[RMDB]
RNA sequence: GGGAACGACUCGAGUAGAGUCGAAAAGAAGUACUCGCCGUCGGCCAUCACGUCGAGCACGGUCUGGUCGCCGUACUCGCCCCUGCCGAUCUUGUUGACCUUCCCGUGCGCCAGCAGGUAGACGGCGCAGCUCAAUGCAGUUCGCUGCAUUGAGCUGAAAAGAAACAACAACAACAAC
Reactivity to 2A3 in 0.01 (KOAc 150mM, MgCl2 10mM, bicine 150mM(pH8.5), 24C), signal-to-noise 4, nucleotides 027 to 126: g110a040a000g040u080a050c010u010c010g000c000c000g020u030c040g000g000c020c010a090u170c080a050c120g060u090c060g080a010g010c010a000c020g010g000u000c050u030g080g010u070c040g030c050c000g010u020a020c010u010c020g000c010c010c010c010u040g040c030c020g020a080u040c040u100u090g050u060u160g030a050c000c000u030u030c030c010c010g020u030g000c030g020c010c030a060g010c000a020g040g020u040a020g000a020c000g010g010c000g000
Reactivity to DMS in 0.01 (KOAc 150mM, MgCl2 10mM, bicine 150mM(pH8.5), 24C), signal-to-noise 3, nucleotides 027 to 126: g010a080a080g020u030a060c040u000c030g020c040c040g000u000c010g020g030c030c040a070u020c090a110c150g030u000c020g000a080g000c050a000c040g010g010u010c190u010g010g040u000c070g020c020c070g000u000a060c080u000c020g010c060c010c020c030u010g030c030c040g020a020u000c050u020u020g000u000u010g020a090c030c070u000u010c120c010c000g040u010g020c070g010c050c020a080g030c080a100g010g010u000a110g010a090c070g000g000c000g010